[RMDB]
RNA sequence: GGGAACGACUCGAGUAGAGUCGAAAAGAUAUGGACCCUCACAGACAUGCUGAUGGGUCGGAAACGACCCUGACAGCAACAGCUGUAAGAGGGUCCUAAGUCAAAGCGACGUGUUCGCACGUCGCAAGUAUAGGGGGUUCUUCGGAACCCCCUAUACAAAAGAAACAACAACAACAAC
Reactivity to DMS in 0.01 (KOAc 150mM, MgCl2 10mM, bicine 150mM(pH8.5), 24C), signal-to-noise 1, nucleotides 027 to 126: g000a060u040a260u000g000g000a030c000c000c000u020c000a080c020a060g000a050c090a290u020g040c020u010g000a300u000g000g040g030u000c000g030g000a070a030a160c000g000a010c020c000c000u000g000a260c300a030g000c000a050a070c140a140g020c000u000g000u000a060a160g000a040g000g010g020u000c000c000u010a000a090g000u000c010a090a080a190g000c010g000a010c000g020u000g000u010u010c140g030c010a000c010g010u000c000g000c000a000a000